[RMDB]
Structure probing data (DMS) for a 177-nucleotide construct. The data come from the RNA Mapping Database (RMDB), library TTRINS. Values are in units of 0.01, from 0 to 300, in steps of 10.
RNA sequence: GGGAACGACUCGAGUAGAGUCGAAAAGAUAUGGAUAUCAAUAUCCUCAUGAUCGCUCGAUAAGAAGCACUCGGAAACGAGUGGCUUCUUUUGACGAGCAUGAUGAGGAUAUUGAUAUCCUAAGUCACUACUCUUUACGGUUCGCCGUAAAGAGUAGAAAAGAAACAACAACAACAAC
Reactivity to DMS in 0.01 (KOAc 150mM, MgCl2 10mM, bicine 150mM(pH8.5), 24C), signal-to-noise 2, nucleotides 027 to 126: g010a040u010a300u000g000g010a010u000a010u000c000a010a020u000a000u010c000c000u010c000a000u010g000a020u010c300g020c000u000c020g000a260u000a010a010g020a000a010g020c010a040c010u000c000g010g020a140a100a290c030g010a030g010u000g020g030c000u000u000c000u000u010u000u000g000a230c140g010a010g020c000a000u000g010a040u000g010a010g020g000a000u000a010u000u010g000a010u000a000u000c000c000u000a020a060g000u000c050a270